[RMDB]
RNA sequence: GGGAACGACUCGAGUAGAGUCGAAAAAGUCCCGGACCUAUCUAAAUUGGAGUCAUCCGACCGUAUGGAGAAAAUUUCCGACAAGAGGUGAUCCACUGAGGGUUUGCGGAAAAAUCACCUCCAGAGGCAGCCACUGACUUCGGUCAGUGGAAAAGAAACAACAACAACAAC
Reactivity to DMS in 0.01 (KOAc 150mM, MgCl2 10mM, bicine 150mM(pH8.5), 24C), signal-to-noise 6, nucleotides 027 to 129: a220g030u000c000c010c000g030g000a070c040c040u070a000u070c090u030a060a100a160u030u050g050g000a090g000u080c030a000u020c020c000g040a080c090c020g020u020a080u060g030g000a060g000a050a040a100a110u040u030u030c010c010g100a140c150a060a090g020a050g020g000u020g020a040u030c050c050a180c070u000g030a090g020g010g010u030u040u070g030c070g000g040a020a030a090a090a060u000c000a000c060c010u030c030c090a060g010a030g020g000c070a100g030
Reactivity to 2A3 in 0.01 (KOAc 150mM, MgCl2 10mM, bicine 150mM(pH8.5), 24C), signal-to-noise 7, nucleotides 027 to 129: a000g070u000c000c000c000g000g010a010c000c010u120a110u190c050u110a080a090a170u180u170g100g000a020g040u100c010a020u000c000c010g020a040c010c010g020u040a070u070g050g000a000g050a020a060a050a080u060u070u030c040c020g050a080c080a070a050g020a030g030g030u020g010a020u010c000c030a050c070u100g050a180g050g140g020u090u100u170g070c060g000g000a020a090a020a000a010u020c010a020c000c000u010c000c010a020g010a010g020g010c000a010g040
Conditions: 150 mM KOAc, 10 mM MgCl2 and 150 mM bicine (pH 8.5), 24 C. Chemical mapping of a 170-nucleotide RNA with DMS and 2A3. Values are in units of 0.01, from 0 to 300, in steps of 10. DMS adducts were read by reverse transcription with MarathonRT. 2A3 adducts were read by reverse transcription with SuperScript II with manganese. Reactivities are given for positions 27 through 129. For DMS, 16,715 sequencing reads were counted.